[RMDB]
RNA sequence: GGGAACGACUCGAGUAGAGUCGAAAAAGCGAUGCAGGCCUUCGGGUUGUAAACCUAUUUCGACAGCGACGAAGCGCAAGAGACGGUACCUAGAGAAGAAGCGCCGGCCAACUACGAGCCAGCAGCCAAUUAUAUUAUAAUUCGUUAUAAUAUAAUUAAAAGAAACAACAACAACAAC
Reactivity to DMS in 0.01 (KOAc 150mM, MgCl2 10mM, bicine 150mM(pH8.5), 24C), signal-to-noise 2, nucleotides 027 to 126: a100g000c050g000a180u020g000c050a090g000g000c000c020u000u050c070g000g010g010u010u010g000u000a050a110a270c180c040u000a140u010u010u010c040g010a040c040a130g010c020g010a110c090g000a090a130g000c050g000c010a050a200g000a080g020a050c040g020g020u020a040c030c020u000a070g000a130g000a110a120g020a150a080g010c040g000c000c000g000g000c010c040a060a090c110u010a040c060g010a090g020c020c020a050g000c010a060g000c050c040
Reactivity to 2A3 in 0.01 (KOAc 150mM, MgCl2 10mM, bicine 150mM(pH8.5), 24C), signal-to-noise 1, nucleotides 027 to 126: a000g040c050g000a010u080g010c030a000g040g110c000c000u080u090c150g020g000g000u020u050g010u050a000a070a130c010c000u050a200u020u080u030c020g030a010c020a000g020c000g000a020c030g050a170a020g080c010g000c070a050a000g000a010g010a030c020g000g010u030a040c010c000u070a030g020a000g010a170a070g070a080a040g020c010g000c020c020g000g060c000c000a090a080c040u150a000c020g000a000g030c000c020a010g000c020a000g000c020c030